This 177-nucleotide RNA was probed chemically with DMS and 2A3. Source: RMDB library M2PK50, as collected in RNAgym. For 2A3 the reverse transcriptase was SuperScript II with manganese. The 2A3 profile rests on 1,114 reads.
RNA sequence: GGGAACGACUCGAGUAGAGUCGAAAAUGGUGCCCGUUCGCGGGCACCACCUCGUGGUUAGGCCCACGUUAAAUAGUUGCUUAAGCCCUAAGCGUUGAUAAAGAUGCGCGAAAUUCGUUUCGCGCAAUUAUACAACUGGUUUCGACCAGUUGUAUAAAAAAGAAACAACAACAACAAC
Reactivity to DMS in 0.01 (KOAc 150mM, MgCl2 10mM, bicine 150mM(pH8.5), 24C), signal-to-noise 5, nucleotides 027 to 126: u000g010g020u000g000c000c000c010g030u000u010c210g000c020g040g010g010c010a000c010c000a010c020c010u000c010g010u000g000g000u000u010a090g010g000c100c000c010a000c010g000u000u010a010a020a030u000a030g010u010u000g010c020u000u000a060a190g010c050c030c080u010a060a120g010c060g010u000u000g010a100u010a070a090a130g010a150u000g010c000g020c000g000a010a010a020u000u000c200g010u000u000u000c000g010c000g020c000a000a000
Reactivity to 2A3 in 0.01 (KOAc 150mM, MgCl2 10mM, bicine 150mM(pH8.5), 24C), signal-to-noise 1, nucleotides 027 to 126: u040g000g000u000g000c020c040c030g040u030u060c170g000c030g060g000g000c000a000c000c000a000c000c000u000c000g010u010g000g040u110u160a030g020g000c010c010c000a000c000g020u030u000a030a010a020u220a090g140u110u110g000c000u030u020a050a050g040c000c000c030u020a060a050g000c000g120u130u230g050a110u170a200a150a040g130a140u050g050c000g000c000g000a010a010a010u080u090c210g010u020u030u000c000g010c000g000c010a000a000

Conditions: 150 mM KOAc, 10 mM MgCl2 and 150 mM bicine (pH 8.5), 24 C. The DMS profile rests on 7,987 reads.